RNA sequence: GGGAACGACUCGAGUAGAGUCGAAAAUUCAUUGGUGUCUGGGAAGCCGAGAACAUUUGUGCGUGUGAGCUCUCCUGUGUGUUCGGCAUGCAGUGUGUUGCGUCUCAGCUGACGUGAUUGCUGUUUUUGGUGGCCCGGAGGCACAGGGUGCAUGCUAACCAGUAUCAGUGUUCGCACUGAUACUGGUAAAAGAAACAACAACAACAAC
Reactivity to DMS in 0.01 (KOAc 150mM, MgCl2 10mM, bicine 150mM(pH8.5), 24C), signal-to-noise 1, nucleotides 027 to 156: u010u000c050a180u000u000g010g050u020g020u010c030u010g070g000g010a160a120g000c060c060g000a120g020a070a100c040a140u010u000u010g020u000g040c000g000u000g040u000g010a120g000c020u000c050u010c020c000u000g000u030g040u000g000u000u010c050g020g000c060a080u000g000c000a040g030u010g050u020g020u000u010g010c010g010u010c010u000c030a300g020c130u010g010a040c000g040u000g000a050u000u010g030c010u000g000u000u000u000u000u000g000g030u000g040g070c170c000c010g000g000a050g000g000c020a020c030a060g010g000g010u000g020c050a050u010g020c030u010a170
Reactivity to 2A3 in 0.01 (KOAc 150mM, MgCl2 10mM, bicine 150mM(pH8.5), 24C), signal-to-noise 4, nucleotides 027 to 156: u090u030c030a020u040u060g020g000u040g050u050c070u080g020g020g060a020a010g020c050c030g040a040g030a110a050c060a120u070u090u130g040u020g030c060g030u040g030u030g060a050g010c010u000c020u050c030c010u000g000u020g000u010g070u030u020c010g000g010c030a010u100g010c000a000g000u060g040u010g000u130u020g000c020g020u000c030u000c110a200g060c160u120g010a000c010g020u020g010a020u070u070g000c010u010g090u060u030u050u090u100g260g030u130g050g030c020c020c030g000g010a040g030g010c000a000c000a000g020g010g010u030g000c000a010u090g020c000u050a040
Source: RMDB library OK3TST, as collected in RNAgym. Structure probing data (DMS and 2A3) for a 207-nucleotide construct. The reactions ran in a buffer of 150 mM KOAc, 10 mM MgCl2 and 150 mM bicine (pH 8.5), at 24 C. 2A3 adducts were read by reverse transcription with SuperScript II with manganese. For DMS, 3,528 sequencing reads were counted. For DMS the reverse transcriptase was MarathonRT.